[RMDB]
RNA sequence: GGGAACGACUCGAGUAGAGUCGAAAAGCAGUAUCUCGUUAGGCGAGGCUCCUAUACGAACACAGGUUGCUGAUCUGACGACGUCGAGAGACGCCCAAGAUUAGGACAGGAUAUAUCGAACCAAGGUGAACCUGUCCAGGGUUCGCCCUGGACAGAAGGAGAAUUACUACUUCGGUAGUAAUUCUCCAAAAGAAACAACAACAACAAC
Reactivity to DMS in 0.01 (KOAc 150mM, MgCl2 10mM, bicine 150mM(pH8.5), 24C), signal-to-noise 2, nucleotides 027 to 156: g000c050a130g010u000a080u000c020u000c040g010u000u000a050g010g020c040g030a150g020g010c040u000c010c010u000a110u000a120c040g000a070a150c060a140c080a100g030g040u000u010g010c010u020g020a040u000c010u000g000a140c020g000a100c010g010u000c010g020a300g000a300g020a020c000g000c040c050c070a200a060g000a070u000u000a040g020g000a110c020a150g000g010a100u010a080u010a080u010c040g030a050a100c020c010a080a150g010g020u000g000a030a090c100c000u000g030u010c030c030a060g000g010g040u000u010c300g040c000c000c000u010g000g020a040c010a030g030a020a120
Reactivity to 2A3 in 0.01 (KOAc 150mM, MgCl2 10mM, bicine 150mM(pH8.5), 24C), signal-to-noise 5, nucleotides 027 to 156: g050c050a010g030u090a120u090c050u020c030g030u060u110a030g030g050c060g050a090g040g050c080u080c010c000u080a090u030a140c060g060a140a020c090a000c020a100g070g010u040u130g090c000u020g000a030u000c020u060g010a010c020g010a030c010g030u000c010g010a020g000a010g000a090c000g000c000c000c010a020a010g020a040u040u070a030g010g050a020c030a030g010g060a040u090a020u020a050u190c060g040a030a040c040c030a040a030g090g000u060g030a050a070c010c000u010g000u000c000c000a000g010g010g000u040u040c130g080c020c000c000u000g000g000a000c010a010g010a010a020

An RNA of 207 nucleotides, treated with DMS and 2A3 and read out base by base.
High DMS reactivity at an A or C suggests that its Watson-Crick edge is free.
The reactions ran in a buffer of 150 mM KOAc, 10 mM MgCl2 and 150 mM bicine (pH 8.5), at 24 C.